[RMDB]
RNA sequence: GGGAACGACUCGAGUAGAGUCGAAAAGAAAGAAACUGCUAGUCAUGCUGACCACAGCCGCCCAGGCAUGGUUGACGGGGCUACCGAGGUACACCAUCAACAGUUGGUCCGAACUGAAGUGGCAGAAGCUCAUCGAGCAAUUCGUUGCUCGAUGAGCAAAAGAAACAACAACAACAAC
Reactivity to DMS in 0.01 (KOAc 150mM, MgCl2 10mM, bicine 150mM(pH8.5), 24C), signal-to-noise 1, nucleotides 027 to 126: g030a050a060a200g020a040a110a050c130u000g000c040u040a050g000u000c090a050u030g010c010u000g000a050c000c000a030c070a040g000c000c100g040c000c000c000a140g120g000c000a080u000g070g000u070u000g000a120c000g000g000g000g010c300u030a020c050c100g030a040g000g040u020a030c100a110c000c120a000u000c030a110a000c040a050g020u000u000g000g000u030c170c050g000a300a050c150u000g000a020a020g000u000g000g000c010a120g000a250a100
Reactivity to 2A3 in 0.01 (KOAc 150mM, MgCl2 10mM, bicine 150mM(pH8.5), 24C), signal-to-noise 1, nucleotides 027 to 126: g020a070a080a030g090a020a000a040c010u000g000c000u050a040g080u010c000a030u100g030c000u000g020a000c000c000a010c050a090g030c030c000g120c000c070c040a000g000g000c000a030u050g050g000u030u010g000a000c060g000g000g000g090c040u060a070c020c000g040a000g080g000u040a160c000a050c070c010a000u020c000a000a030c000a050g030u070u000g060g000u000c020c020g010a060a050c000u060g030a070a000g140u010g050g010c000a000g030a130a010
An RNA of 177 nucleotides, treated with DMS and 2A3 and read out base by base. High 2A3 reactivity points to a flexible backbone, as in loops and unpaired stretches.